[RMDB]
Structure probing data (2A3 and DMS) for a 177-nucleotide construct. DMS adducts were read by reverse transcription with MarathonRT. The 2A3 profile rests on 5,012 reads. The DMS profile rests on 2,552 reads. The data come from the RNA Mapping Database (RMDB), library M2PK90. Reactivities are given for positions 27 through 126.
RNA sequence: GGGAACGACUCGAGUAGAGUCGAAAAGCAACGGGAGGGAGGCCGGAAGCGCGAUCCGGCCAAACGCGCACCAUGGAAAGAGCACAAAAAGAAGUUGAAGUGCUCACAACUUCACCCUCCCAACAAAGAUACGAGGAUAUUUCGAUAUCCUCGUAUCAAAAGAAACAACAACAACAAC
Reactivity to 2A3 in 0.01 (KOAc 150mM, MgCl2 10mM, bicine 150mM(pH8.5), 24C), signal-to-noise 4, nucleotides 027 to 126: g020c020a030a070c110g000g010g010a000g010g020g000a070g010g020c010c000g010g010a060a030g120c100g030c030g100a020u000c000c010g030g000c000c000a010a010a010c030g000c020g000c010a070c050c020a070u060g050g040a080a150a060g010a020g000c030a020c040a040a180a010a010a020g190a050a040g030u070u100g090a210a050g020u010g010c000u010c000a020c010a010a020c020u100u070c020a050c040c000c000u010c000c010c000a000a020c010a000a010a010
Reactivity to DMS in 0.01 (KOAc 150mM, MgCl2 10mM, bicine 150mM(pH8.5), 24C), signal-to-noise 3, nucleotides 027 to 126: g020c110a150a110c230g020g020g010a040g010g000g020a180g040g020c010c030g010g020a060a090g020c060g000c100g020a110u010c000c000g010g010c000c020a000a040a060c110g000c030g010c100a190c040c020a060u010g010g010a040a050a130g010a040g000c010a020c040a030a060a100a070a120g000a040a060g020u000u000g000a130a130g000u000g000c030u030c030a120c080a010a040c060u000u000c040a100c010c000c010u010c000c000c000a050a030c170a030a110a110